Overview:
The record gives the reactivity of an RNA of 207 nucleotides to 2A3 and DMS. It was measured as part of the RMDB library ARCHII. 2A3 adducts were read by reverse transcription with SuperScript II with manganese. For DMS, 2,380 sequencing reads were counted. The 2A3 profile rests on 1,073 reads. The RNA was probed in 150 mM KOAc, 10 mM MgCl2 and 150 mM bicine (pH 8.5) at 24 C. High DMS reactivity at an A or C suggests that its Watson-Crick edge is free.
[RMDB]
RNA sequence: GGGAACGACUCGAGUAGAGUCGAAAAGCUGUGGCCCAAGUGGGAGCGACGCGUAAUGAGGAGGAUGUGAUUCUGAGGUUCAAUUCUCAUUGGCUCUCGUGGAGAACGCGCCCUCCGUUGGCUGUUGCUCUGGUAAAGUAGACUCAGCGAAGGCUAACCAGGUUAUAACCUUCGGGUUAUAACCUGGAAAAGAAACAACAACAACAAC
Reactivity to 2A3 in 0.01 (KOAc 150mM, MgCl2 10mM, bicine 150mM(pH8.5), 24C), signal-to-noise 2, nucleotides 027 to 156: g030c020u020g010u040g110g010c000c010c030a040a040g220u300g040g000g030a000g000c010g010a020c030g030c020g080u220a030a100u230g080a070g100g000a010g000g000a030u010g060u010g050a300u040u000c070u060g010a000g020g070u100u070c000a010a000u220u060c110u150c230a020u010u030g020g000c000u010c000u000c080g120u070g100g130a070g010a040a010c000g020c000g000c030c000c000u000c000c000g010u040u110g020g000c020u120g010u010u000g000c000u000c000u000g020g020u090a050a050a020g050u060a000g080a080c020u000c040a030g000c010g040a020a030g050g020c040u020a070a000
Reactivity to DMS in 0.01 (KOAc 150mM, MgCl2 10mM, bicine 150mM(pH8.5), 24C), signal-to-noise 1, nucleotides 027 to 156: g000c000u000g030u010g010g030c010c000c040a070a190g020u000g050g000g030a100g020c010g030a020c000g000c050g000u000a100a070u000g010a130g000g000a100g000g040a040u000g010u030g020a230u000u000c000u010g000a040g000g000u010u000c020a030a110u000u000c120u020c160a140u000u000g000g000c020u000c020u000c030g010u010g040g010a080g030a050a040c020g000c030g000c030c010c000u000c000c000g040u000u000g020g030c010u000g020u000u000g000c000u000c060u000g040g040u000a120a070a150g070u000a110g000a060c000u010c030a130g070c000g060a110a100g030g000c020u010a130a240